[RMDB]
RNA sequence: GGGAACGACUCGAGUAGAGUCGAAAAGAUAUGGAGUGGAUGAACUACGACAAUGGUCGGAAACGACCAGAACGUCGCAUCGUAACAUCUCCUAAGUCAAAGUGAGUGGCGUUCGCGCCACUCACAAGAACGUAAAUGACUUCGGUCAUUUACGUUCAAAAGAAACAACAACAACAAC
Reactivity to 2A3 in 0.01 (KOAc 150mM, MgCl2 10mM, bicine 150mM(pH8.5), 24C), signal-to-noise 5, nucleotides 027 to 126: g030a000u020a030u060g010g010a020g050u300g300g010a010u020g010a080a090c120u210a050c300g000a000c010a040a080u040g000g020u010c000g020g010a010a030a010c000g000a010c000c030a010g010a130a030c130g010u000c010g000c020a020u000c010g100u150a200a090c050a300u150c030u000c010c000u010a030a010g000u020c050a170a070a040g000u010g010a000g000u000g000g020c040g010u050u140c250g030c000g020c100c010a000c000u000c000a000c000a000a000
Reactivity to DMS in 0.01 (KOAc 150mM, MgCl2 10mM, bicine 150mM(pH8.5), 24C), signal-to-noise 5, nucleotides 027 to 126: g010a010u000a110u010g000g010a030g040u020g010g010a040u000g010a060a030c110u010a290c020g010a010c000a080a160u000g000g020u010c000g000g000a020a050a080c010g000a020c000c010a010g000a060a090c280g000u000c000g000c020a000u000c020g000u010a170a170c210a060u010c000u000c000c000u000a040a140g010u000c030a050a100a130g000u000g020a010g020u000g010g010c010g010u000u000c220g020c020g000c010c000a000c000u000c000a000c010a030a040

Structure probing data (2A3 and DMS) for a 177-nucleotide construct. The RNA was probed in 150 mM KOAc, 10 mM MgCl2 and 150 mM bicine (pH 8.5) at 24 C. DMS adducts were read by reverse transcription with MarathonRT. For DMS, 4,911 sequencing reads were counted. For 2A3 the reverse transcriptase was SuperScript II with manganese.